[RMDB]
RNA sequence: GGGAACGACUCGAGUAGAGUCGAAAACGGUGCAUCUGUAUUGACGGCAUGGGCAGCUGGUUUGCAGCUUAGCAUUAGAAAACAGAACCGUUCGAUAAUACCUGUGUUUAACGCCCUGUCAGUACCGCCGCAAGAAGAAAUUCGUUUCUUCUUGCGGAAAAGAAACAACAACAACAAC
Reactivity to DMS in 0.01 (KOAc 150mM, MgCl2 10mM, bicine 150mM(pH8.5), 24C), signal-to-noise 3, nucleotides 027 to 126: c010g010g000u010g020c130a050u020c060u010g000u010a060u000u000g020a170c300g010g010c030a070u000g020g010g030c030a050g010c010u020g010g030u000u010u020g020c020a040g000c030u000u010a100g000c040a070u000u000a220g010a070a120a030a050c010a030g000a070a040c050c030g000u000u000c040g000a060u000a040a190u010a050c030c040u000g000u000g010u000u010u000a090a110c130g000c040c010c030u010g010u000c090a040g020u000a080c080c160g010
Reactivity to 2A3 in 0.01 (KOAc 150mM, MgCl2 10mM, bicine 150mM(pH8.5), 24C), signal-to-noise 2, nucleotides 027 to 126: c020g030g020u070g000c010a090u030c050u000g020u010a060u050u090g060a020c060g020g090c060a100u160g010g000g040c020a040g000c000u070g000g270u150u220u170g070c020a020g000c000u030u080a000g000c000a010u030u080a070g060a050a100a010a010c030a010g040a040a020c000c000g030u000u060c040g020a000u050a160a030u020a140c010c000u020g000u010g030u060u080u050a100a020c040g010c000c000c000u040g050u050c020a030g030u040a080c010c050g030